Structure probing data (DMS and 2A3) for a 207-nucleotide construct. High DMS reactivity at an A or C suggests that its Watson-Crick edge is free.
[RMDB]
RNA sequence: GGGAACGACUCGAGUAGAGUCGAAAACGCGCGGAGGGCUAGGGUCCGUACACAGAUAGGCUUUGUCAUUUAAAGUUCGAUAUGGGUAUGGAGAACGGUGUAGGCGAACAGCUCGUAUGCGUAGUAGUGGGCUGUACGGCCUUAGUCUCGAGGGAUACGAAGUAUAGCAUUUCGAUGCUAUACUUCGAAAAGAAACAACAACAACAAC
Reactivity to DMS in 0.01 (KOAc 150mM, MgCl2 10mM, bicine 150mM(pH8.5), 24C), signal-to-noise 2, nucleotides 027 to 156: c070g040c090g050c050g040g020a200g030g010g030c040u000a080g000g010g030u000c010c030g030u000a020c020a060c030a060g010a090u000a060g010g000c100u000u000u020g020u040c100a200u000u010u020a030a020a070g000u000u000c040g000a170u000a070u010g000g010g040u010a040u010g000g000a130g000a050a080c030g000g050u000g030u000a050g020g010c020g000a170a040c020a080g000c030u020c020g010u000a060u020g020c120g000u000a140g000u000a110g000u010g030g000g010c000u010g010u000a050c040g040g010c000c020u010u000a030g000u010c000u010c030g000a100g000g000g000a110u000a170
Reactivity to 2A3 in 0.01 (KOAc 150mM, MgCl2 10mM, bicine 150mM(pH8.5), 24C), signal-to-noise 4, nucleotides 027 to 156: c090g030c010g000c050g030g110a080g040g030g020c020u020a020g020g010g000u070c030c010g000u010a010c040a000c000a010g100a100u160a070g030g040c020u080u020u090g100u050c060a120u070u130u200a070a060a020g050u120u120c050g010a020u010a040u170g040g000g020u070a100u050g030g020a050g000a070a010c030g020g020u050g040u080a040g010g040c020g010a050a030c020a010g010c000u030c030g050u060a020u090g050c050g020u040a030g010u000a010g050u090g010g030g050c090u030g010u010a020c020g030g000c000c000u000u000a000g010u010c010u010c030g000a050g020g020g000a020u050a130
The 2A3 profile rests on 3,227 reads. Conditions: 150 mM KOAc, 10 mM MgCl2 and 150 mM bicine (pH 8.5), 24 C. The DMS profile rests on 5,031 reads.